RNA sequence: GGGAACGACUCGAGUAGAGUCGAAAAGGUGUACGCGCGGGUGUCGUCGGCUGAUCAGAAGUCUGAUUUGGAUCGGCAGGUGGCGCGGGUGACUUCGUGGGCCACAGCCGAACAGAUCCCGGUCGACGCCCUGGUAUGAGUUCGCUCAUACCAGGGCAAAAGAAACAACAACAACAAC
Reactivity to 2A3 in 0.01 (KOAc 150mM, MgCl2 10mM, bicine 150mM(pH8.5), 24C), signal-to-noise 3, nucleotides 027 to 126: g100g000u030g020u100a070c010g030c030g000c080g030g060g040u030g040u080c040g010u010c010g020g020c020u030g000a050u040c040a020g120a280a020g150u130c060u100g000a030u040u030u100g110g000a150u020c000g050g000c080a090g170g000u000g010g000c000g000c010g020g000g020u150g030a090c080u080u030c060g040u070g060g220g000c010c000a000c000a000g000c000c000g010a000a010c000a010g030a010u030c020c010c010g000g030u070c020g000a010c060
Reactivity to DMS in 0.01 (KOAc 150mM, MgCl2 10mM, bicine 150mM(pH8.5), 24C), signal-to-noise 1, nucleotides 027 to 126: g000g020u000g000u000a020c090g000c100g010c050g000g000g000u010g000u000c000g020u000c000g000g000c060u020g000a080u000c000a060g020a180a060g010u030c030u000g020a000u010u000u010g000g000a060u010c040g000g000c020a180g020g010u010g010g000c010g050c000g000g000g000u020g000a190c230u080u030c000g000u010g000g050g050c020c000a010c050a170g000c030c020g000a060a080c130a080g020a030u000c000c070c020g000g000u000c020g010a040c050